[RMDB]
RNA sequence: GGGAACGACUCGAGUAGAGUCGAAAAGAAAGAAUAGGCUUGGGCACGGUCCUUCUCGCGGAUAGCGUAGAUGUCUCUAUUCGUUAACAGCUACAUUGUCCGCAGGGAUCUAGCCACAUGGCAAUAAGUACCUACUCUGCUUCGGCAGAGUAGGUACAAAAGAAACAACAACAACAAC
Reactivity to DMS in 0.01 (KOAc 150mM, MgCl2 10mM, bicine 150mM(pH8.5), 24C), signal-to-noise 1, nucleotides 027 to 126: g020a090a050a120g020a200a090u020a160g000g030c050u000u020g010g000g040c100a110c300g000g000u000c000c000u010u010c150u000c120g030c010g000g020a010u000a000g000c060g040u000a000g000a000u000g000u000c230u020c120u020a150u010u010c070g030u010u000a080a020c030a040g010c000u000a000c020a010u010u010g000u000c000c010g020c000a000g000g060g000a030u000c000u000a270g000c010c020a120c040a000u020g000g000c030a130a120u050a080a150
Reactivity to 2A3 in 0.01 (KOAc 150mM, MgCl2 10mM, bicine 150mM(pH8.5), 24C), signal-to-noise 4, nucleotides 027 to 126: g080a050a080a010g130a020a090u190a170g130g000c000u020u040g000g000g000c050a030c120g010g020u020c020c000u030u100c110u070c190g000c020g000g000a000u000a020g010c020g000u010a000g020a040u030g020u000c020u020c020u160a300u230u160c070g040u040u110a150a010c000a000g030c000u000a000c000a000u030u040g000u000c010c000g000c010a000g000g010g010a000u000c010u010a030g000c030c020a120c000a050u090g030g000c020a010a050u140a200a040
An RNA of 177 nucleotides, treated with DMS and 2A3 and read out base by base. The RNA was probed in 150 mM KOAc, 10 mM MgCl2 and 150 mM bicine (pH 8.5) at 24 C. 2A3 adducts were read by reverse transcription with SuperScript II with manganese.